[RMDB]
RNA sequence: GGGAACGACUCGAGUAGAGUCGAAAAGAUAUGGACCCAUCGAGCUAUGAAGUCACGUCGGAAACGACGUGAGUGGAGCUCUUGAUGGGUCCUAAGUCAAAGGAGUAAAAGUUCGCUUUUACUCCAACAACACUAGGUAGUUCGCUACCUAGUGUUGAAAAGAAACAACAACAACAAC
Reactivity to DMS in 0.01 (KOAc 150mM, MgCl2 10mM, bicine 150mM(pH8.5), 24C), signal-to-noise 7, nucleotides 027 to 126: g000a010u000a080u010g000g000a020c000c000c000a000u000c000g000a010g020c010u010a300u010g010a070a150g010u000c000a000c000g010u000c000g020g000a020a020a040c000g010a010c000g020u000g000a000g020u010g020g020a040g010c010u000c000u000u020g030a000u000g010g000g010u000c000c000u000a000a050g000u000c010a090a100a140g000g000a010g000u000a000a010a010a010g020u000u010c250g020c000u000u000u000u000a010c000u000c000c000a050a070
Reactivity to 2A3 in 0.01 (KOAc 150mM, MgCl2 10mM, bicine 150mM(pH8.5), 24C), signal-to-noise 6, nucleotides 027 to 126: g000a000u020a010u050g000g000a000c000c000c000a010u000c010g000a000g000c020u120a170u300g050a030a010g060u010c010a000c000g010u000c000g000g000a000a010a010c000g000a000c000g000u000g000a010g010u070g050g040a050g010c030u020c020u040u130g000a000u000g000g000g000u000c000c000u000a000a000g000u000c010a010a050a140g000g000a000g000u000a000a000a000a010g020u060u200c250g140c100u000u010u000u000a000c000u000c000c000a000a010
An RNA of 177 nucleotides, treated with DMS and 2A3 and read out base by base. Source: RMDB library TTRDEL, as collected in RNAgym. The reactions ran in a buffer of 150 mM KOAc, 10 mM MgCl2 and 150 mM bicine (pH 8.5), at 24 C. Values cover nucleotides 27 to 126. DMS adducts were read by reverse transcription with MarathonRT.